Source: RMDB library RFMREP, as collected in RNAgym. This 177-nucleotide RNA was probed chemically with DMS and 2A3. The DMS profile rests on 997 reads. For 2A3 the reverse transcriptase was SuperScript II with manganese.
RNA sequence: GGGAACGACUCGAGUAGAGUCGAAAACUUUCGGGACACUUAUUCCUUUGCUUAAGACCAACUCUGUUUUCGCCUUUGCCCCUUCAUCAUUAUACAAAAUGUCUACCAUUACCACACCCACACAUUGCUCUGAUACCUAGUUCGCUAGGUAUCAGAGAAAAGAAACAACAACAACAAC
Reactivity to DMS in 0.01 (KOAc 150mM, MgCl2 10mM, bicine 150mM(pH8.5), 24C), signal-to-noise 1, nucleotides 027 to 126: c060u000u010u010c070g010g010g000a040c100a100c070u010u010a130u000u000c040c000u010u000u010g010c070u000u000a080a070g000a100c050c040a050a050c060u020c030u000g000u000u000u000u000c070g000c060c030u000u010u010g010c000c010c020c020u000u000c060a030u000c070a040u020u000a110u000a100c120a070a050a050a060u010g010u000c050u000a040c030c050a070u000u020a050c050c050a010c070a100c040c000c020a080c100a020c160a060u000u010g010
Reactivity to 2A3 in 0.01 (KOAc 150mM, MgCl2 10mM, bicine 150mM(pH8.5), 24C), signal-to-noise 2, nucleotides 027 to 126: c020u000u090u120c040g040g070g010a000c030a010c060u110u030a040u070u110c030c000u000u080u140g040c030u110u100a080a030g020a090c010c000a030a060c030u000c020u100g070u030u020u040u030c050g060c010c000u090u070u110g030c010c000c000c060u000u050c020a080u000c000a010u040u180a070u040a220c050a000a110a010a020u040g020u060c010u030a090c030c010a010u070u000a020c040c000a040c000a020c030c000c000a010c000a000c000a100u040u150g030